Conditions: 150 mM KOAc, 10 mM MgCl2 and 150 mM bicine (pH 8.5), 24 C. The record gives the reactivity of an RNA of 207 nucleotides to 2A3 and DMS. DMS adducts were read by reverse transcription with MarathonRT. It was measured as part of the RMDB library OK3TST.

RNA sequence: GGGAACGACUCGAGUAGAGUCGAAAACAAGUGACUGGCUCAGGGCUUCCAACCAUGGAUGAGUGUUUCAGUGCUGGCCAUGCACUCCUCGAACAACCAUGGGAGUGGAUGGCCCCAUUGACUGUUCUCCCUCAACAGUAUCAUUGUCCUAAGGGAAAAAGUGCCUAAGUUUCGACUUAGGCACUUUAAAAGAAACAACAACAACAAC
Reactivity to 2A3 in 0.01 (KOAc 150mM, MgCl2 10mM, bicine 150mM(pH8.5), 24C), signal-to-noise 3, nucleotides 027 to 156: c020a050a030g040u070g140a030c040u030g020g020c010u020c060a080g070g030g000c050u040u000c020c020a110a100c030c030a110u170g010g010a030u050g020a030g080u070g060u020u110u070c010a000g000u020g050c050u050g000g000c000c020a000u060g030c010a000c000u010c000c010u130c040g110a180a090c100a100a100c120c070a110u210g000g000g000a010g010u020g010g190a020u000g000g000c000c000c000c010a050u010u050g030a020c000u020g020u040u000c030u030c040c000c010u050c030a040a070c000a050g050u050a080u170c030a050u050u120g000u030c000c030u060a040a070g000g000g000a060a060
Reactivity to DMS in 0.01 (KOAc 150mM, MgCl2 10mM, bicine 150mM(pH8.5), 24C), signal-to-noise 1, nucleotides 027 to 156: c050a060a110g000u000g000a100c030u010g040g010c030u010c030a070g020g000g000c030u000u010c020c050a080a110c030c030a080u020g000g010a050u000g000a140g010u000g020u000u000u010c060a020g030u000g000c070u010g030g060c030c030a070u000g000c000a010c010u000c010c020u000c180g000a040a160c050a070a160c130c120a170u000g030g000g010a050g060u010g000g020a040u000g000g000c000c000c050c030a020u000u000g030a080c030u000g000u000u000c060u000c020c010c000u000c050a030a070c000a030g010u000a110u000c060a070u000u000g000u000c010c000u000a100a080g000g000g000a050a130